This 177-nucleotide RNA was probed chemically with DMS and 2A3. Conditions: 150 mM KOAc, 10 mM MgCl2 and 150 mM bicine (pH 8.5), 24 C. The DMS profile rests on 1,788 reads. Reactivities are rounded to 0.1 and cut off at 0 and 3. As a SHAPE reagent, 2A3 marks flexible, mostly unpaired nucleotides at the ribose 2'-OH. It was measured as part of the RMDB library TTRDES.
RNA sequence: GGGAACGACUCGAGUAGAGUCGAAAAGAUAUGGAUGUUGAUCUCGCGAUAAGCUGUCUGGUCGGAAACGACCAGCAGCUUUUGACGCGAGACAACAUCCUAAGUCAAAAGACGAGUUCGCUCGUCACAACCCUCGUAUCUUCGGAUACGAGGGUUGAAAAGAAACAACAACAACAAC
Reactivity to DMS in 0.01 (KOAc 150mM, MgCl2 10mM, bicine 150mM(pH8.5), 24C), signal-to-noise 2, nucleotides 027 to 126: g000a010u000a300u000g010g000a010u010g010u000u000g010a160u000c000u000c010g020c000g020a100u000a000a010g030c000u000g000u010c010u000g010g030u000c000g000g050a180a060a210c000g000a010c000c010a000g020c010a000g000c000u000u000u000u000g020a300c100g000c000g000a010g000a000c000a000a010c000a010u010c000c000u000a000a050g000u000c050a070a040a120a120g000a010c000g000a010g030u000u010c300g030c030u000c000g040u000c010a140
Reactivity to 2A3 in 0.01 (KOAc 150mM, MgCl2 10mM, bicine 150mM(pH8.5), 24C), signal-to-noise 1, nucleotides 027 to 126: g050a000u080a010u190g000g020a040u010g010u000u030g180a300u030c010u000c000g010c000g000a050u040a070a000g000c000u010g250u290c010u000g030g000u000c040g000g050a030a050a070c010g000a010c000c000a000g000c000a000g030c000u010u010u000u050g010a000c060g000c010g010a000g000a020c020a000a000c020a000u010c000c000u000a000a000g020u010c040a100a060a040a000g000a010c000g000a000g020u140u120c300g110c160u000c000g000u040c000a000